Overview:
This 177-nucleotide RNA was probed chemically with DMS and 2A3. 2A3 adducts were read by reverse transcription with SuperScript II with manganese. Reactivities are given for positions 27 through 126. The RNA was probed in 150 mM KOAc, 10 mM MgCl2 and 150 mM bicine (pH 8.5) at 24 C.
[RMDB]
RNA sequence: GGGAACGACUCGAGUAGAGUCGAAAAACGCACCACUACGGUGGUGCGAUUUUGCGAUGUGUUCCUAAUAUGUCAAACAAAUGUAUUGGGAACAUUUUGCAUUCGUAGCGCAGUUACGACUGCGCAACAGACAACUCUUAUUCGUAAGAGUUGUCUGAAAAGAAACAACAACAACAAC
Reactivity to DMS in 0.01 (KOAc 150mM, MgCl2 10mM, bicine 150mM(pH8.5), 24C), signal-to-noise 8, nucleotides 027 to 126: a050c010g010c000a010c000c000a000c010u000a100c180g040g020u000g000g010u000g010c000g010a000u000u000u000u000g010c000g020a000u000g020u000g010u000u000c000c000u000a010a010u000a000u000g010u010c080a090a130a140c300a110a140a020u000g000u000a000u000u010g010g010g000a010a000c000a000u000u000u000u000g000c000a040u010u000c030g020u020a080g000c010g010c000a000g000u010u020a150c200g010a070c010u000g000c000g020c010a040a070
Reactivity to 2A3 in 0.01 (KOAc 150mM, MgCl2 10mM, bicine 150mM(pH8.5), 24C), signal-to-noise 9, nucleotides 027 to 126: a000c010g000c000a010c000c010a000c010u030a030c270g120g000u000g000g000u000g000c000g000a000u010u020u030u030g000c000g010a010u010g000u000g000u010u000c000c000u000a000a000u000a000u010g080u030c090a170a100a120c050a060a220a050u080g010u010a000u000u000g000g000g000a000a000c000a000u000u000u000u010g000c010a010u030u090c080g150u160a050g000c000g000c000a000g000u030u100a110c290g030a020c110u000g000c000g000c000a000a000